[RMDB]
Conditions: 150 mM KOAc, 10 mM MgCl2 and 150 mM bicine (pH 8.5), 24 C. An RNA of 177 nucleotides, treated with DMS and 2A3 and read out base by base. DMS (dimethyl sulfate) methylates the pairing face of unpaired adenines and cytosines. The 2A3 profile rests on 4,733 reads. DMS adducts were read by reverse transcription with MarathonRT.
RNA sequence: GGGAACGACUCGAGUAGAGUCGAAAAAAACACAACUGAAUGCAUUACAUUAUAGUGAUUUCUAAAUCAGCAGAGGAGUCUUUUACAUGCUUCUUGAUUGGUCACAAUGACUACUCUGUGCCAGUCACUUGUACAAAGAGUUCGCUCUUUGUACAAGAAAAGAAACAACAACAACAAC
Reactivity to DMS in 0.01 (KOAc 150mM, MgCl2 10mM, bicine 150mM(pH8.5), 24C), signal-to-noise 5, nucleotides 027 to 126: a030a050a050c060a030c050a090a100c230u010g000a070a020u000g010c120a140u010u000a110c020a030u000u000a090u010a190g010u000g010a150u000u010u000c050u000a050a100a080u010c190a040g020c020a020g020a030g000g000a020g010u000c010u000u010u000u010a060c140a070u000g000c020u000u000c090u000u000g000a020u000u000g000g000u000c030a020c020a030a160u000g010a030c020u000a030c020u000c020u010g010u000g000c010c030a000g010u000c010a260
Reactivity to 2A3 in 0.01 (KOAc 150mM, MgCl2 10mM, bicine 150mM(pH8.5), 24C), signal-to-noise 4, nucleotides 027 to 126: a010a000a010c120a070c070a140a000c060u120g060a040a000u040g040c040a060u110u230a130c010a020u060u070a080u120a180g050u030g030a060u000u060u000c030u050a100a140a120u140c060a040g020c000a000g020a020g060g020a000g000u000c000u050u250u040u120a110c090a080u040g010c010u130u070c000u080u060g030a010u030u020g000g040u230c030a000c010a030a040u140g000a010c010u020a030c000u040c010u020g020u000g000c020c010a000g000u000c010a000